[RMDB]
RNA sequence: GGGAACGACUCGAGUAGAGUCGAAAACAAACACAAAUCAUCGUCAUCUCUUUUUUGGAAAUAAAAGUAGAAGUACUUUUUUGAAGGAAAUAAUUUGUGGCUUGACAGUAGAUUCUGGGAAUCAAAGGUUGGGAAUCAUCUUCGGAUGAUUCCCAACAAAAGAAACAACAACAACAAC
Reactivity to 2A3 in 0.01 (KOAc 150mM, MgCl2 10mM, bicine 150mM(pH8.5), 24C), signal-to-noise 2, nucleotides 027 to 126: c040a000a030a060c050a000c020a070a030a070u050c010a040u000c120g150u020c040a010u070c040u110c000u110u280u060u150u040u130g190g030a000a040a040u210a040a190a020a000g000u060a010g100a110a090g140u100a060c000u040u020u050u040u050u180g040a120a120g050g050a170a030a000u170a000a090u090u000u060g050u070g020g000c090u040u020g010a060c050a030g000u060a000g000a030u110u060c040u120g080g000g100a000a020u160c050a130a060a020g020

Annotation: The record gives the reactivity of an RNA of 177 nucleotides to 2A3. Values cover nucleotides 27 to 126. For 2A3, 404 sequencing reads were counted. Conditions: 150 mM KOAc, 10 mM MgCl2 and 150 mM bicine (pH 8.5), 24 C.